RNA sequence: GGGAACGACUCGAGUAGAGUCGAAAAGAAGUUAAGAUUAUAGAUGCCGUAGUGGGAGAGAAAGCGCCCUAUUUUUGUGGAGGGUUUAUUUUGUGUGACUCCGUAACCGGCACAGCGUGCCGUGUGGACUGGACGAAUAAUUCGUUAUUCGUCCAGUAAAAGAAACAACAACAACAAC
Reactivity to DMS in 0.01 (KOAc 150mM, MgCl2 10mM, bicine 150mM(pH8.5), 24C), signal-to-noise 4, nucleotides 027 to 126: g020a100a070g010u000u010a080a100g000a130u000u010a090u010a090g010a070u000g010c030c020g010u000a090g010u010g000g000g000a100g000a130g000a040a060a090g010c160g000c020c020c020u000a040u000u000u000u010u010g020u010g010g000a070g000g000g010u000u000u000a040u010u010u010u010g000u000g010u000g000a110c030u000c010c020g010u010a160a080c080c020g000g000c000a020c010a130g010c190g010u000g030c010c000g000u010g030u010g000g000
Reactivity to 2A3 in 0.01 (KOAc 150mM, MgCl2 10mM, bicine 150mM(pH8.5), 24C), signal-to-noise 2, nucleotides 027 to 126: g070a040a000g020u070u130a030a050g020a100u110u150a030u140a210g110a100u080g030c020c010g000u030a030g030u110g010g070g030a050g000a010g000a060a060a010g110c070g060c040c010c030u060a140u030u200u030u140u190g100u120g030g050a020g040g050g000u030u120u030a090u050u150u090u050g090u020g050u040g050a020c030u010c000c000g000u040a060a080c010c040g010g090c020a000c050a020g230c030g000u040g000c000c020g080u110g060u060g000g020